The record gives the reactivity of an RNA of 177 nucleotides to DMS and 2A3. For DMS the reverse transcriptase was MarathonRT. The DMS profile rests on 1,631 reads. In probing experiments dimethyl sulfate is read out at A N1 and C N3, which are open when not base-paired.
RNA sequence: GGGAACGACUCGAGUAGAGUCGAAAAGUUUUUCGAAAGACGGUGGUUUUUCUGGAAACGAUGAUUUUUCUGAAGACAUGGUGCCGAUAUACUCAGUCAUUUGUUUGUUAAGGCAUCAUAUCGGGAUAAUAGCCGGAGAAUUCGUUCUCCGGCUAUUAAAAGAAACAACAACAACAAC
Reactivity to DMS in 0.01 (KOAc 150mM, MgCl2 10mM, bicine 150mM(pH8.5), 24C), signal-to-noise 1, nucleotides 027 to 126: g010u000u000u000u020u000c110g000a000a000a000g000a000c000g000g030u070g000g060u000u000u000u020u000c000u030g010g020a000a030a000c030g000a200u000g000a090u000u000u020u000u000c000u010g000a220a140g000a000c000a030u000g040g030u000g000c000c000g010a210u020a090u060a010c010u000c050a030g000u010c280a130u070u100u000g000u010u000u000g000u000u000a150a220g010g020c000a020u010c000a010u000a020u000c000g010g000g020a150u010
Reactivity to 2A3 in 0.01 (KOAc 150mM, MgCl2 10mM, bicine 150mM(pH8.5), 24C), signal-to-noise 2, nucleotides 027 to 126: g000u000u000u000u000u110c000g000a000a000a000g060a000c010g120g060u200g140g010u080u010u000u010u000c000u060g010g000a000a000a000c020g010a070u100g040a050u120u000u020u000u000c050u000g230a250a070g020a000c010a000u000g000g000u000g040c050c010g040a070u100a000u000a300c070u030c070a090g250u050c200a300u170u000u180g030u210u040u020g090u000u020a190a000g020g040c000a010u030c000a000u000a000u010c020g010g040g020a010u080